An RNA of 177 nucleotides, treated with DMS and 2A3 and read out base by base. It was measured as part of the RMDB library OK1LIB.
RNA sequence: GGGAACGACUCGAGUAGAGUCGAAAAGAGCUGAAGUACAGCAAGAACGACGAAAUCCUUGGCACAGCGUCGAAGAUAAGCGUGCCGAAUGCCAAGGAUUAACGGCACGCGAGGCGAAGACGCCAGAAUAUUAGUAUCAUUUCGAUGAUACUAAUAUAAAAGAAACAACAACAACAAC
Reactivity to DMS in 0.01 (KOAc 150mM, MgCl2 10mM, bicine 150mM(pH8.5), 24C), signal-to-noise 9, nucleotides 027 to 126: g010a140g010c020u000g000a160a130g030u040a160c030a030g010c040a130a070g010a150a140c080g010a080c130g020a090a100a040u000c010c000u010u000g010g000c010a130c300a120g010c070g010u010c060g000a080a150g010a110u030a070a140g000c000g010u000g000c000c010g010a070a080u010g000c000c010a010a020g010g010a030u010u010a020a080c050g000g010c000a000c000g000c000g000a060g000g010c020g000a180a140g000a100c040g020c000c100a090g000a090
Reactivity to 2A3 in 0.01 (KOAc 150mM, MgCl2 10mM, bicine 150mM(pH8.5), 24C), signal-to-noise 9, nucleotides 027 to 126: g130a020g000c010u020g020a160a020g130u230a160c010a000g010c030a020a050g080a110a030c080g120a010c040g040a080a110a040u020c010c000u010u010g010g000c010a040c050a160g090c070g080u090c050g070a090a030g050a120u170a120a040g010c000g000u000g000c010c000g030a060a030u090g000c000c000a010a000g000g010a000u010u020a010a010c010g000g000c000a000c000g000c010g000a050g000g020c040g030a150a040g080a120c040g000c000c010a050g090a100